[RMDB]
RNA sequence: GGGAACGACUCGAGUAGAGUCGAAAAUGCAUUUUAGCCAAGUGCUCAGAUGCUUGUGGUGGCUGCUUAUGCACCACGAAUGCUUGAGCAUGUGCUAUGGUACCUAAAAGAACUUGUUCGCAAGUUCCUAGCGAUACACCUUCGGGUGUAUCGCUAGAAAAGAAACAACAACAACAAC
Reactivity to 2A3 in 0.01 (KOAc 150mM, MgCl2 10mM, bicine 150mM(pH8.5), 24C), signal-to-noise 1, nucleotides 027 to 126: u070g000c010a020u140u060u140u140a030g020c000c010a300a160g040u000g060c000u000c010a080g250a300u220g060c000u050u000g000u000g080g000u040g030g200c020u040g020c050u220u140a120u300g000c010a000c000c000a000c000g000a190a040u180g000c010u000u060g010a010g000c020a000u010g070u090g000c000u000a000u030g040g030u120a120c020c000u060a090a060a030a000g010a000a020c010u010u020g010u000u130c120g030c060a000a040g000u000u000c040